Chemical mapping of a 207-nucleotide RNA with DMS and 2A3.
For DMS the reverse transcriptase was MarathonRT.
The reactions ran in a buffer of 150 mM KOAc, 10 mM MgCl2 and 150 mM bicine (pH 8.5), at 24 C.

[RMDB]
RNA sequence: GGGAACGACUCGAGUAGAGUCGAAAAUGAACAUUCGUGUUCAAUGUCGCGUACUACGAGGUUCGUUCGAGGAUCUUAGACUACCCACCGCAUCCCAAAUAGGAUGCGAGGUCUAAGGGAGAACCCUCGUAUCGCAAGAGUCUAUGUUCGCAUAGAACCACAAUUACAAUUUCGAUUGUAAUUGUGGAAAAGAAACAACAACAACAAC
Reactivity to DMS in 0.01 (KOAc 150mM, MgCl2 10mM, bicine 150mM(pH8.5), 24C), signal-to-noise 3, nucleotides 027 to 156: u010g010a010a000c010a050u000u000c280g060u000g030u000u000c000a060a130u010g040u000c050g000c030g000u000a080c120u000a040c000g020a020g010g030u000u010c090g040u000u000c030g020a120g010g010a050u020c020u010u000a030g000a030c000u000a030c030c010c020a300c170c010g000c000a000u020c010c040c020a050a140a190u000a050g000g010a010u000g010c020g000a000g000g000u010c010u000a020a000g000g000g010a100g000a050a010c030c000c000u000c010g020u000a010u000c020g000c020a080a120g000a130g000u000c020u000a030u000g000u000u010c180g040c040a030u010a040g010a070a230
Reactivity to 2A3 in 0.01 (KOAc 150mM, MgCl2 10mM, bicine 150mM(pH8.5), 24C), signal-to-noise 7, nucleotides 027 to 156: u100g010a010a000c020a040u080u140c230g100u070g010u080u030c060a090a060u280g130u250c120g000c030g010u060a080c050u010a010c040g010a010g040g000u130u300c090g010u020u000c020g060a220g010g000a010u000c000u000u010a000g000a000c010u080a150c050c050c050a030c030c000g000c010a010u020c020c040c030a110a300a090u240a090g000g010a000u000g000c000g000a010g000g000u000c000u000a000a010g000g010g000a030g000a010a000c000c000c010u000c000g010u000a010u080c010g000c010a010a040g070a020g110u000c000u020a010u030g040u060u160c220g020c100a030u030a020g020a020a030
For 2A3 the reverse transcriptase was SuperScript II with manganese.
For 2A3, 10,409 sequencing reads were counted.
The DMS profile rests on 6,526 reads.